[RMDB]
RNA sequence: GGGAACGACUCGAGUAGAGUCGAAAAUACGCAAAAAGAACUAACGAAGGACUUAGCAGGAGAUUGGUAAAGUUAUGAAAUUUAAAGUUAUCGUAUAUUUUGAUCACAUGGAAGAUGAUGUAGAAAUUUAUGAUAGCAAGGAUGAAGCUAUCAAGAGUGCAGUAAUACCAUUCGUGGUAUUACUGCAAAAAGAAACAACAACAACAAC
Reactivity to DMS in 0.01 (KOAc 150mM, MgCl2 10mM, bicine 150mM(pH8.5), 24C), signal-to-noise 2, nucleotides 027 to 156: u000a050c080g030c050a060a060a060a140a110g000a100a130c050u000a090a050c050g000a090a060g000g020a030c090u020u000a050g060c030a060g000g020a060g000a090u010u000g010g000u010a040a080a090g010u000u010a040u000g020a110a100a070u000u010u000a030a080a170g000u000u000a040u000c010g000u000a050u000a040u000u000u000u000g010a090u000c000a040c050a080u010g070g010a110a130g010a070u000g010a030u000g000u000a170g010a030a050a050u000u000u000a050u030g010a030u000a000g020c000a050a100g010g010a110u020g000a100a180g000c000u000a040u000c040a040a100g000a150g040
Reactivity to 2A3 in 0.01 (KOAc 150mM, MgCl2 10mM, bicine 150mM(pH8.5), 24C), signal-to-noise 4, nucleotides 027 to 156: u060a000c030g020c010a060a050a000a030a000g080a060a050c080u090a090a010c130g090a040a030g020g030a030c010u060u060a010g010c010a010g040g040a020g030a100u080u110g020g000u090a070a080a040g020u060u070a040u120g040a050a070a050u140u180u130a130a100a000g010u040u020a010u050c000g020u040a070u050a030u250u140u030u120g030a040u100c020a000c010a050u070g030g030a000a020g040a040u040g000a020u030g010u040a010g060a030a020a000u120u140u080a090u090g010a000u000a000g000c030a030a040g030g000a010u110g040a050a000g020c000u010a010u050c000a010a020g060a000g050
This 207-nucleotide RNA was probed chemically with DMS and 2A3. The RNA was probed in 150 mM KOAc, 10 mM MgCl2 and 150 mM bicine (pH 8.5) at 24 C. For DMS, 3,786 sequencing reads were counted.